[RMDB]
RNA sequence: GGGAACGACUCGAGUAGAGUCGAAAAGAUCUCCGGUUCGCCGGAGAUCAAAGAAGUCACAACGGCUUCCUGAGGUGGCAGAUUGAAUUAUUGGAGCAAAAAAAAUCGUUCCCUUCGGGGAACGAAACAAAUAGUGUAGCUUCGGCUACACUAUUUGAAAAGAAACAACAACAACAAC
Reactivity to DMS in 0.01 (KOAc 150mM, MgCl2 10mM, bicine 150mM(pH8.5), 24C), signal-to-noise 3, nucleotides 027 to 126: g010a010u000c000u000c000c010g000g010u000u010c250g030c000c000g030g010a010g000a000u000c000a020a070a100g000a080a090g010u000c010a050c080a070a100c140g010g000c020u000u010c000c040u010g010a090g010g000u000g010g010c000a060g000a160u000u000g000a070a070u010u010a060u000u000g010g010a080g030c070a000a000a000a050a090a040a070a110u000c000g000u000u000c000c000c000u000u010c190g020g010g000g000a010a000c000g010a000a020a090
Reactivity to 2A3 in 0.01 (KOAc 150mM, MgCl2 10mM, bicine 150mM(pH8.5), 24C), signal-to-noise 3, nucleotides 027 to 126: g000a000u010c000u000c000c000g020g010u030u030c140g020c030c010g000g010a000g000a000u000c000a000a000a000g000a040a010g010u020c020a020c040a160a120c140g070g020c020u120u050c020c010u070g030a050g080g010u020g020g000c010a030g040a190u160u190g090a160a130u180u070a070u120u180g000g000a020g000c000a000a020a020a000a000a000a000a180u020c010g000u000u000c000c000c050u000u010c160g060g000g000g000a000a000c000g000a010a000a000
Background:
This 177-nucleotide RNA was probed chemically with DMS and 2A3. The RNA was probed in 150 mM KOAc, 10 mM MgCl2 and 150 mM bicine (pH 8.5) at 24 C. The data come from the RNA Mapping Database (RMDB), library M2PK50. Reactivities are given for positions 27 through 126. For 2A3, 4,272 sequencing reads were counted. The DMS profile rests on 3,181 reads. For DMS the reverse transcriptase was MarathonRT.